[RMDB]
RNA sequence: GGGAACGACUCGAGUAGAGUCGAAAAGUUGCCCGAGAAGAGAUCACACAGAUGAGACACAAGGAGCGAUGUCUCAUCACAUGGUUUUCGACAAGUGACGAGUCGUUCCCAAAAUCGCUCCAAUGAAGGUUGUAUCCAAAUUCGUUUGGAUACAACCAAAAGAAACAACAACAACAAC
Reactivity to DMS in 0.01 (KOAc 150mM, MgCl2 10mM, bicine 150mM(pH8.5), 24C), signal-to-noise 2, nucleotides 027 to 126: g010u010u010g000c010c030c000g020a160g020a070a170g010a190g010a090u000c020a070c050a090c170a130g000a040u000g000a030g010a010c010a010c100a090a080g020g020a030g020c020g010a100u000g020u000c000u000c000a010u000c000a020c160a130u000g000g020u000u000u000u000c000g000a020c010a060a180g020u020g010a060c030g000a000g010u000c000g010u000u000c000c010c000a000a020a050a040u000c000g010c000u000c000c000a090a110u010g000a160a110

Conditions: 150 mM KOAc, 10 mM MgCl2 and 150 mM bicine (pH 8.5), 24 C. This 177-nucleotide RNA was probed chemically with DMS. High DMS reactivity at an A or C suggests that its Watson-Crick edge is free.